The record gives the reactivity of an RNA of 177 nucleotides to DMS and 2A3.
The reactions ran in a buffer of 150 mM KOAc, 10 mM MgCl2 and 150 mM bicine (pH 8.5), at 24 C.
For 2A3 the reverse transcriptase was SuperScript II with manganese.

RNA sequence: GGGAACGACUCGAGUAGAGUCGAAAACUUCCAGUCCACCAAACAUAUCACAUUUUUGGCAAAGGGAGCGAUAUUUGGGAUUGGAGCGAAUAAGUUGGCAAAAAGGAGUAAAGUUACAUAAUCUAGACACUUUCUAAUUCUUCGGAAUUAGAAAGUGAAAAGAAACAACAACAACAAC
Reactivity to DMS in 0.01 (KOAc 150mM, MgCl2 10mM, bicine 150mM(pH8.5), 24C), signal-to-noise 2, nucleotides 027 to 126: c070u000u010c020c010a040g030u000c030c060a200c150c060a030a040a150c180a070u000a050u000c080a090c100a120u000u000u000u010u000g030g010c080a070a090a060g020g010g000a040g010c070g000a050u010a050u000u000u010g040g000g020a030u000u000g010g020a030g030c110g000a070a060u000a050a050g010u000u010g000g000c070a010a030a060a060a060g000g000a110g020u010a030a090a070g010u000u000a070c090a100u010a070a090u000c020u000a030g020a300
Reactivity to 2A3 in 0.01 (KOAc 150mM, MgCl2 10mM, bicine 150mM(pH8.5), 24C), signal-to-noise 1, nucleotides 027 to 126: c020u000u000c000c000a010g020u000c010c020a070c080c020a060a070a050c040a070u120a030u200c040a010c050a120u050u090u130u150u150g090g000c060a050a040a070g080g000g030a050g030c080g060a030u030a010u120u060u070g050g000g010a030u020u020g010g020a010g000c000g020a030a030u120a080a030g150u110u070g100g000c040a070a020a060a060a000g050g090a040g010u100a040a130a110g030u060u050a040c030a060u120a110a020u070c000u010a020g010a010